Chemical mapping of a 207-nucleotide RNA with 2A3 and DMS.
RNA sequence: GGGAACGACUCGAGUAGAGUCGAAAACAACCUGCGUGGGUUGGGGCGGCUUAGCGGAUUAAGGCGUUGUUCCACCCUAGUGGUACCCCACGCAAAGCCUGCGUGCAGGCGGGGUACGUGCCGCGGGGCACAACUGGUCGAGAGUUGGCCUGCUCUCCAUGCUUGAUAUCUUCGGAUAUCAAGCAUGAAAAGAAACAACAACAACAAC
Reactivity to 2A3 in 0.01 (KOAc 150mM, MgCl2 10mM, bicine 150mM(pH8.5), 24C), signal-to-noise 4, nucleotides 027 to 156: c010a000a070c000c020u070g040c070g070u130g010g030g010u040u110g050g020g040g020c030g040g010c030u070u060a080g040c110g240g160a270u150u210a090a000g060g000c030g050u040u050g040u070u020c000c020a010c040c000c000u030a080g020u040g120g000u050a050c000c000c000c010a040c050g100c010a010a060a000g010c020c020u050g030c060g180u150g030c010a010g040g000c040g000g010g000g000u110a060c070g020u050g010c010c010g050c060g000g040g030g020c030a020c000a100a090c090u130g080g000u100c060g010a010g010a000g050u090u100g050g000c010c010u030g020c000u000c000u000c010
Reactivity to DMS in 0.01 (KOAc 150mM, MgCl2 10mM, bicine 150mM(pH8.5), 24C), signal-to-noise 2, nucleotides 027 to 156: c000a050a230c000c010u010g020c080g090u000g000g020g030u000u000g020g010g000g040c080g020g040c060u010u010a070g020c060g010g000a230u020u000a080a140g020g010c040g010u010u000g030u000u000c020c040a100c000c010c010u000a050g050u000g010g020u000a110c110c010c010c000a090c120g000c070a080a030a090g000c010c000u000g000c070g040u000g010c070a110g030g000c000g010g030g010g040u000a040c070g020u000g020c000c020g010c150g000g030g070g050c000a070c050a110a050c140u000g040g010u010c030g000a210g010a190g000u000u000g030g010c070c110u010g010c010u010c020u010c010

The reactions ran in a buffer of 150 mM KOAc, 10 mM MgCl2 and 150 mM bicine (pH 8.5), at 24 C.
The 2A3 profile rests on 3,644 reads.